[RMDB]
RNA sequence: GGGAACGACUCGAGUAGAGUCGAAAAAUGGGCGGGCAUGCGGCCGGCACCGGCGUGCAAGCCGCGUACAGCAACCUGAUGCAAGGCAAGACCACCGUGCGCGCGGCGAAGCGCCUGGUCGAGCUGGCAACAAGCUCCACUUCGGUGGAGCUUGUUGAAAAGAAACAACAACAACAAC
Reactivity to DMS in 0.01 (KOAc 150mM, MgCl2 10mM, bicine 150mM(pH8.5), 24C), signal-to-noise 1, nucleotides 027 to 126: a140u000g000g000g020c070g030g000g020c040a120u000g000c070g010g030c030c140g000g010c080a100c020c070g010g020c090g050u000g010c060a080a300g020c000c000g000c000g020u000a020c030a050g000c070a030a150c050c030u040g010a050u020g030c070a120a090g020g030c050a050a210g000a030c010c000a120c060c140g000u000g030c010g000c030g000c060g000g050c080g010a120a250g000c050g010c030c020u000g000g000u000c020g000a230g000c010u010g010g000